Record summary
This 177-nucleotide RNA was probed chemically with DMS and 2A3. It was measured as part of the RMDB library RFMREP. For 2A3, 1,629 sequencing reads were counted. DMS adducts were read by reverse transcription with MarathonRT. Conditions: 150 mM KOAc, 10 mM MgCl2 and 150 mM bicine (pH 8.5), 24 C.

[RMDB]
RNA sequence: GGGAACGACUCGAGUAGAGUCGAAAAGGAAAGAAUGUUCCAUGACCGUAAAUACAGGCACCCCACAGUGCUUGCUAUCGCGGCAAUAUCGCCAGUGGUGCUGUCGUGAUGCGGUCUUCGCAUGGACCGGGAUACAAUACUUCGGUAUUGUAUCCCGAAAAGAAACAACAACAACAAC
Reactivity to DMS in 0.01 (KOAc 150mM, MgCl2 10mM, bicine 150mM(pH8.5), 24C), signal-to-noise 2, nucleotides 027 to 126: g010g010a080a120a090g010a110a080u000g000u020u010c020c010a040u000g000a050c000c000g010u000a030a100a090u040a190c010a000g010g000c000a000c000c100c060c210a070c130a200g010u000g000c030u000u000g000c010u010a020u000c050g000c040g000g000c010a010a040u000a020u000c030g000c100c200a170g000u020g000g020u000g020c090u000g040u000c040g010u000g000a080u030g000c000g020g000u000c040u010u000c150g000c160a060u010g000g000a080c120
Reactivity to 2A3 in 0.01 (KOAc 150mM, MgCl2 10mM, bicine 150mM(pH8.5), 24C), signal-to-noise 2, nucleotides 027 to 126: g090g050a130a050a000g090a110a190u160g070u140u010c020c000a030u020g000a000c000c010g000u040a080a090a060u090a070c020a020g000g000c000a030c000c010c090c040a000c040a060g020u060g000c000u030u010g050c040u060a010u120c010g010c010g000g000c000a000a000u040a020u090c040g040c130c130a230g030u190g280g020u000g000c030u010g010u030c010g000u000g020a020u030g020c010g000g000u000c000u040u060c010g030c000a000u030g010g000a020c030